[RMDB]
RNA sequence: GGGAACGACUCGAGUAGAGUCGAAAAGAUAUGGAAUUCACGCUAGAACAACAGCUUCUUCGGAAACGAAGAAGACAUGUUCAAACGUGAGAUUCCUAAGUCAAAGGAACUACUUCGGUAGUUCCAACCUCAACGAGUUGUUCGCAACUCGUUGAGGAAAAGAAACAACAACAACAAC
Reactivity to DMS in 0.01 (KOAc 150mM, MgCl2 10mM, bicine 150mM(pH8.5), 24C), signal-to-noise 1, nucleotides 027 to 126: g010a000u000a300u000g000g000a020a010u000u020c000a070c020g010c000u020a300g010a000a010c000a000a090c300a250g010c000u000u000c000u000u000c000g060g020a110a150a180c020g000a000a000g020a010a000g010a050c080a050u000g000u000u000c000a010a120a160c050g000u000g210a130g000a020u000u000c000c000u000a010a200g000u000c010a050a050a290g000g000a060a000c000u000a000c010u000u050c140g000g010u000a000g000u000u000c000c030a090a050